[RMDB]
RNA sequence: GGGAACGACUCGAGUAGAGUCGAAAAGAUAUGGAUGAGGAUGAUGAGGCCAACAGCUAUUCUCGGAAACGAGAAUAGACAUGGCUCGCAUCUCAUCCUAAGUCAAAGCAGACGUUCGCGUCUGCAACAAGCAAAGGAGGUUCGCCUCCUUUGCUUGAAAAGAAACAACAACAACAAC
Reactivity to 2A3 in 0.01 (KOAc 150mM, MgCl2 10mM, bicine 150mM(pH8.5), 24C), signal-to-noise 2, nucleotides 027 to 126: g050a020u070a050u160g000g000a020u000g010a040g300g060a080u020g040a120u070g040a090g160g240c010c030a070a020c060a190g030c000u010a000u000u020c010u000c010g050g000a090a080a010c020g010a040g010a000a010u000a010g020a010c010a010u070g010g000c000u000c000g000c000a020u000c010u000c010a000u010c000c000u000a130a030g040u030c050a040a030a180g000c000a010g000a000c000g010u100u110c300g050c020g140u030c010u010g000c000a000a020
Reactivity to DMS in 0.01 (KOAc 150mM, MgCl2 10mM, bicine 150mM(pH8.5), 24C), signal-to-noise 2, nucleotides 027 to 126: g000a050u020a300u000g000g000a000u000g000a040g020g010a010u010g010a100u010g030a130g000g000c000c010a030a100c300a180g020c000u000a010u000u000c000u000c000g000g000a110a070a170c000g010a000g010a010a000u000a010g000a040c070a190u000g000g000c040u000c020g000c010a010u000c000u000c000a020u000c000c000u000a010a100g000u020c040a140a080a150g010c050a020g000a020c000g010u020u000c300g050c010g020u000c030u000g020c000a070a050

Structure probing data (2A3 and DMS) for a 177-nucleotide construct. The 2A3 profile rests on 3,471 reads. For DMS, 1,754 sequencing reads were counted. 2A3 adducts were read by reverse transcription with SuperScript II with manganese.